[RMDB]
Conditions: 150 mM KOAc, 10 mM MgCl2 and 150 mM bicine (pH 8.5), 24 C. Chemical mapping of a 177-nucleotide RNA with DMS. Values cover nucleotides 27 to 126. For DMS the reverse transcriptase was MarathonRT.
RNA sequence: GGGAACGACUCGAGUAGAGUCGAAAACUGGGAGGGUUGUGUCUAGAGUAGGCGGAGGGCUGGCGUGGGGGGCGGAGCUGCCCUUUCCUGCGUCCUUGCUCCCUCCUGAGAGCGCAUGGGAGCGCGCCUUAUGUACCCGGUUCGCCGGGUACAUAAGAAAAGAAACAACAACAACAAC
Reactivity to DMS in 0.01 (KOAc 150mM, MgCl2 10mM, bicine 150mM(pH8.5), 24C), signal-to-noise 1, nucleotides 027 to 126: c100u010g000g010g000a070g000g000g010u000u000g040u010g020u010c070u010a100g000a150g010u010a070g010g030c070g030g000a050g000g010g000c070u010g020g000c020g030u000g020g000g010g000g000g010c020g000g000a160g040c160u010g020c010c010c020u000u000u000c000c010u000g000c010g020u010c010c120u000u000g000c060u000c020c010c000u000c020c020u010g000a090g010a100g000c020g010c010a070u010g010g000g030a140g020c060g000c040g000c080